[RMDB]
RNA sequence: GGGAACGACUCGAGUAGAGUCGAAAAGAUGUAGCGAGCGUAAAUGUUAAAAUAUAGAACCUGACAGAAUCGCAAGUUAGGGGCGAUCGGCAAUCAAGAAGCUACCGGCGGAAAACGCCUAUAGAAAGGGAUUAAAUAACUUCGGUUAUUUAAUCCCAAAAGAAACAACAACAACAAC
Reactivity to 2A3 in 0.01 (KOAc 150mM, MgCl2 10mM, bicine 150mM(pH8.5), 24C), signal-to-noise 1, nucleotides 027 to 126: g030a000u060g000u130a070g010c040g010a010g000c070g010u080a040a080a000u080g020u070u060a160a170a160a010u300a000u040a020g020a070a090c030c130u070g000a010c040a060g060a120a070u130c020g000c080a060a050g030u180u160a010g010g000g010g080c000g000a060u050c000g010g000c040a000a070u020c000a130a000g050a000a010g020c000u000a010c050c000g000g010c000g000g030a000a180a000a000c000g000c040c050u020a010u080a150g100a010a020a020
Reactivity to DMS in 0.01 (KOAc 150mM, MgCl2 10mM, bicine 150mM(pH8.5), 24C), signal-to-noise 2, nucleotides 027 to 126: g020a070u000g000u050a040g000c050g030a160g000c030g010u020a080a110a160u030g010u000u030a090a070a120a080u020a200u030a090g030a080a060c060c020u040g010a040c000a050g000a100a060u000c040g000c080a050a130g000u020u010a090g010g000g000g000c030g000a020u030c070g010g010c100a010a030u000c040a090a080g010a090a060g010c000u000a020c100c240g010g040c040g000g000a110a040a200a120c000g000c010c010u010a170u050a080g000a030a110a100

An RNA of 177 nucleotides, treated with 2A3 and DMS and read out base by base. The reactions ran in a buffer of 150 mM KOAc, 10 mM MgCl2 and 150 mM bicine (pH 8.5), at 24 C. The 2A3 profile rests on 808 reads. As a SHAPE reagent, 2A3 marks flexible, mostly unpaired nucleotides at the ribose 2'-OH. For 2A3 the reverse transcriptase was SuperScript II with manganese. For DMS, 1,987 sequencing reads were counted. DMS adducts were read by reverse transcription with MarathonRT. It was measured as part of the RMDB library OK1LIB.